Background
An RNA of 207 nucleotides, treated with 2A3 and read out base by base.
[RMDB]
RNA sequence: GGGAACGACUCGAGUAGAGUCGAAAAAGUCCACCUGCAAAGAAUCACAUCAAGCAACUUUCUUCAUUAUCAGCCUGCUGCCGAGCUCGGGAAGGACCUCAUAGACUUGGCCACUUUUAGGCCUCAGCCAACUGCCAGUGGGUGUUACGGUGGUGAAACUUUUACCACGUUUCGACGUGGUAAAAGUAAAAGAAACAACAACAACAAC
Reactivity to 2A3 in 0.01 (KOAc 150mM, MgCl2 10mM, bicine 150mM(pH8.5), 24C), signal-to-noise 1, nucleotides 027 to 156: a030g080u040c030c010a030c050c050u130g140c020a050a100a000g020a140a040u110c060a060c020a160u130c250a280a020g000c110a170a140c000u070u130u050c010u060u010c040a070u030u180a060u150c020a020g060c010c010u040g000c040u010g080c070c060g040a000g080c000u100c110g000g000g010a000a010g010g020a030c000c010u010c040a110u090a100g020a150c110u050u030g040g000c000c010a030c040u200u240u040u070a020g010g000c000c020u040c030a060g000c000c000a030a090c010u050g000c010c000a000g000u060g020g000g020u040g060u100u020a100c040g000g000u000g000g040u020g010a060a000
Reactivities are rounded to 0.1 and cut off at 0 and 3. The reactions ran in a buffer of 150 mM KOAc, 10 mM MgCl2 and 150 mM bicine (pH 8.5), at 24 C.